About this RNA: An RNA of 177 nucleotides, treated with 2A3 and DMS and read out base by base. Reactivities are given for positions 27 through 126. The data come from the RNA Mapping Database (RMDB), libraries RFM100 and RFMREP. The reactions ran in a buffer of 150 mM KOAc, 10 mM MgCl2 and 150 mM bicine (pH 8.5), at 24 C.
RNA sequence: GGGAACGACUCGAGUAGAGUCGAAAAAAUCAUGUAUUGCACUGGAAAAGAAAUAUUCUCAUUAUGUAUUUUCCCCAAAUGAUGGCCCACCAUUGCAUUUGAAUACCUGCUGUCAAUAUCAAUAAUACACACACUAUACAUUCGUGUAUAGUGUGUGAAAAGAAACAACAACAACAAC
Reactivity to 2A3 in 0.01 (KOAc 150mM, MgCl2 10mM, bicine 150mM(pH8.5), 24C), signal-to-noise 9, nucleotides 027 to 126: a000a010u150c060a050u070g040u100a070u050u090g020c020a010c070u060g030g030a040a070a030a030g120a030a100a030u130a110u100u040c060u000c050a090u080u140a060u140g100u030a080u040u040u010u010c020c000c000c010a000a080a030u070g020a020u030g020g000c010c010c000a050c020c010a040u030u120g010c010a020u030u030u090g050a070a020u080a160c000c010u030g030c020u060g060u090c030a020a050u020a030u150c040a050a060u110a170a040u160a080
Reactivity to DMS in 0.01 (KOAc 150mM, MgCl2 10mM, bicine 150mM(pH8.5), 24C), signal-to-noise 6, nucleotides 027 to 126: a060a060u010c040a050u010g010u010a050u010u010g010c070a050c090u010g010g000a050a050a060a080g000a090a080a050u000a070u000u010c030u010c050a090u000u000a050u010g010u010a060u000u010u010u000c010c010c050c110a040a040a050u010g000a060u010g000g010c020c010c040a060c060c050a020u000u000g000c030a050u000u000u010g000a070a070u000a070c050c020u000g010c050u000g000u010c050a030a050u010a040u020c080a050a060u020a060a050u030a170